An RNA of 177 nucleotides, treated with DMS and 2A3 and read out base by base. As a SHAPE reagent, 2A3 marks flexible, mostly unpaired nucleotides at the ribose 2'-OH. Conditions: 150 mM KOAc, 10 mM MgCl2 and 150 mM bicine (pH 8.5), 24 C. The data come from the RNA Mapping Database (RMDB), library OK2TRN. The DMS profile rests on 3,965 reads.
RNA sequence: GGGAACGACUCGAGUAGAGUCGAAAAUGUAUCAGGUAGGUAGGUGGGUAGGUAGGUAGGUAGAAUAGAUAGAUAAAAUGAGUAAGACUGUCUCAGGAUGAGGGCAACUCUAAGGGUCUUCAAGAACCAUCAUAGAGCGAUUCGUCGCUCUAUGAUGAAAAGAAACAACAACAACAAC
Reactivity to DMS in 0.01 (KOAc 150mM, MgCl2 10mM, bicine 150mM(pH8.5), 24C), signal-to-noise 4, nucleotides 027 to 126: u000g020u000a080u020c100a090g000g000u010a050g010g010u010a070g010g010u000g000g010g010u000a060g010g010u000a030g030g000u000a030g010g020u000a100g010a090a080u010a090g000a060u000a060g010a070u000a040a040a120a100u000g010a060g000u000a070a070g000a110c050u000g000u010c010u000c110a080g010g000a110u010g000a070g020g000g010c060a050a040c060u000c050u010a080a120g000g010g000u000c020u010u010c100a090a100g000a110a110c160
Reactivity to 2A3 in 0.01 (KOAc 150mM, MgCl2 10mM, bicine 150mM(pH8.5), 24C), signal-to-noise 2, nucleotides 027 to 126: u130g040u050a170u080c060a020g140g000u120a050g070g020u070a010g050g050u180g080g020g050u050a070g010g050u070a050g010g020u010a040g040g000u040a000g030a060a040u060a050g050a030u050a000g050a000u140a130a100a040a080u140g020a030g040u050a050a030g010a060c070u040g030u060c020u000c040a060g150g000a090u130g030a040g000g030g010c040a080a040c010u000c000u060a030a030g100g000g030u000c040u030u090c060a000a030g050a030a020c010